[RMDB]
RNA sequence: GGGAACGACUCGAGUAGAGUCGAAAAACAGUCAGUACGCUGACUGAGGGAAACGGGAGCCGGGCUUGGGACAAGAGCCAUCCCAAGUCGAAGGCCAAGUAGGCUCUAGUGAUGGUACGCCAUCACAAAAACUGGUCUACCUUCGGGUAGACCAGAAUCACCUAUAAAUCUUCGGAUUUAUAGGUGAAAAAGAAACAACAACAACAAC
Reactivity to DMS in 0.01 (KOAc 150mM, MgCl2 10mM, bicine 150mM(pH8.5), 24C), signal-to-noise 1, nucleotides 027 to 156: a150c000a070g020u020c000a010g000u010a190c250g050c060u030g000a060c000u010g000a110g020g030g010a190a130a060c080g000g000g000a080g070c090c100g000g010g040c000u000u020g020g030g050a070c030a090a110g000a070g050c070c000a300u000c000c010c000a000a040g040u030c010g010a090a070g040g010c030c100a010a110g030u000a080g000g000c020u000c010u000a250g020u000g000a040u000g020g000u000a150c300g070c020c000a000u000c000a000c020a010a030a040a110a060c000u000g050g010u000c020u000a010c000c000u000u000c280g050g060g020u010a020g010a010c000c000a000g000a030a100
Reactivity to 2A3 in 0.01 (KOAc 150mM, MgCl2 10mM, bicine 150mM(pH8.5), 24C), signal-to-noise 4, nucleotides 027 to 156: a000c000a000g010u000c000a000g000u040a040c240g020c130u000g000a010c000u000g020a070g020g040g000a080a130a110c120g030g000g080a100g010c040c080g130g050g000c010u000u000g000g000g000a000c010a060a080g010a000g020c010c000a000u000c000c000c000a000a000g000u020c050g050a120a040g010g000c040c010a050a020g080u130a090g030g000c010u010c000u010a030g000u000g000a010u020g020g020u020a030c190g040c040c000a010u020c010a000c010a000a070a000a000a000c000u000g010g000u000c000u000a000c000c010u030u090c210g070g000g000u000a000g010a000c000c000a000g000a000a010

Conditions: 150 mM KOAc, 10 mM MgCl2 and 150 mM bicine (pH 8.5), 24 C. An RNA of 207 nucleotides, treated with DMS and 2A3 and read out base by base. For 2A3, 3,559 sequencing reads were counted. High DMS reactivity at an A or C suggests that its Watson-Crick edge is free. 2A3 adducts were read by reverse transcription with SuperScript II with manganese. Values cover nucleotides 27 to 156.